[RMDB]
RNA sequence: GGGAACGACUCGAGUAGAGUCGAAAAACUGUCGCCGAGUGUAUGAUAUUUGCCAAUCACUGGGUUGCCAAGAAAAUCGCCGAGUCAUUUCCAAGCACGGCCCUGUUGCGUUAUCAUCCGUCGCCGACCUCCUGGUGUCCUUCGGGACACCAGGAGGAAAAGAAACAACAACAACAAC
Reactivity to 2A3 in 0.01 (KOAc 150mM, MgCl2 10mM, bicine 150mM(pH8.5), 24C), signal-to-noise 2, nucleotides 027 to 126: a000c030u020g030u020c000g040c010c050g050a060g030u030g010u020a040u120g170a120u130a250u230u140u130g040c020c020a020a030u060c020a030c040u010g020g080g000u040u140g000c000c000a000a040g090a040a050a020a000u020c040g080c030c000g010a000g040u080c030a010u050u010u040c000c000a010a000g050c050a010c010g010g000c020c000c030u060g000u110u070g070c030g080u030u030a090u160c030a050u070c000c040g010u050c020g030c000c040g050a060
Structure probing data (2A3) for a 177-nucleotide construct. Source: RMDB library OK1LIB, as collected in RNAgym. Conditions: 150 mM KOAc, 10 mM MgCl2 and 150 mM bicine (pH 8.5), 24 C.